Chemical mapping of a 177-nucleotide RNA with DMS. Reactivities are given for positions 27 through 126. The reactions ran in a buffer of 150 mM KOAc, 10 mM MgCl2 and 150 mM bicine (pH 8.5), at 24 C. The data come from the RNA Mapping Database (RMDB), library OK2TRN.

RNA sequence: GGGAACGACUCGAGUAGAGUCGAAAAAGUUGCUUUGGCUCUGUUGAAAACUCCAGCCCGGUUUGAUGCUGAUGAGCUCCAUGCUGCCAUGAAGGGCCUUGGAACUGAUGAAGACACUCUGAAUGAAAUCUUUAGACCUCUUCGGAGGUCUAAAGAUAAAAGAAACAACAACAACAAC
Reactivity to DMS in 0.01 (KOAc 150mM, MgCl2 10mM, bicine 150mM(pH8.5), 24C), signal-to-noise 1, nucleotides 027 to 126: a130g020u010u000g000c130u000u000u000g010g010c010u000c030u020g000u000u020g010a150a090a090a110c060u000c050c060a090g000c020c060c020g040g020u000u000u000g000a120u010g000c030u010g000a100u000g020a050g000c020u020c000c030a050u000g000c180u000g030c030c020a050u010g010a100a090g040g010g010c030c010u000u000g020g040a020a090c020u010g010a150u050g020a150a050g010a140c070a050c060u000c060u000g020a060a060u010g020a120a070
Source information
Reactivities are rounded to 0.1 and cut off at 0 and 3.